[RMDB]
RNA sequence: GGGAACGACUCGAGUAGAGUCGAAAAACGCUAGGCACUGCCGUUUGAAGUCUGCCUAGAAGAGAUUAAUCAAACUAGCAUAAUGACGGAUGUCUAUCACCUCCCAUUAUGCGAAACCUAUUGAUAGACUACGCACGUAGAAGUGCUAGUAUCAGAAGCUUUUAAUAGGCUUCGGCCUAUUAAAAGCAAAAGAAACAACAACAACAAC
Reactivity to DMS in 0.01 (KOAc 150mM, MgCl2 10mM, bicine 150mM(pH8.5), 24C), signal-to-noise 1, nucleotides 027 to 156: a020c050g040c010u000a000g010g020c060a050c020u020g000c030c060g000u000u000u000g050a180a060g020u000c160u000g010c000c000u000a040g040a030a080g010a220g000a110u020u020a080a120u010c050a040a060a100c060u000a170g020c000a000u000a010a050u000g000a070c140g030g000a140u020g030u000c080u000a090u000c010a070c100c020u000c050c060c000a050u000u000a040u000g000c000g010a110a020a140c190c090u020a140u000u000g000a060u020a050g020a010c000u010a060c130g040c010a010c000g000u000a170g000a170a260g010u000g020c010u000a100g030u010a040u010c080a100g010a180a210
Reactivity to 2A3 in 0.01 (KOAc 150mM, MgCl2 10mM, bicine 150mM(pH8.5), 24C), signal-to-noise 2, nucleotides 027 to 156: a000c010g000c010u000a000g000g010c010a010c030u010g000c030c040g000u000u000u010g000a000a000g000u010c010u010g000c000c000u010a000g010a030a040g050a020g010a060u140u220a020a000u050c010a010a010a000c000u010a000g000c000a000u000a010a000u020g030a070c180g010g010a000u030g020u010c010u030a010u010c010a010c010c020u000c000c000c000a000u000u010a000u010g000c000g000a010a000a000c020c040u130a180u170u050g000a000u000a010g010a010c000u010a010c110g020c010a010c010g030u110a080g100a300a030g050u000g000c010u000a000g020u000a090u220c080a050g130a260a030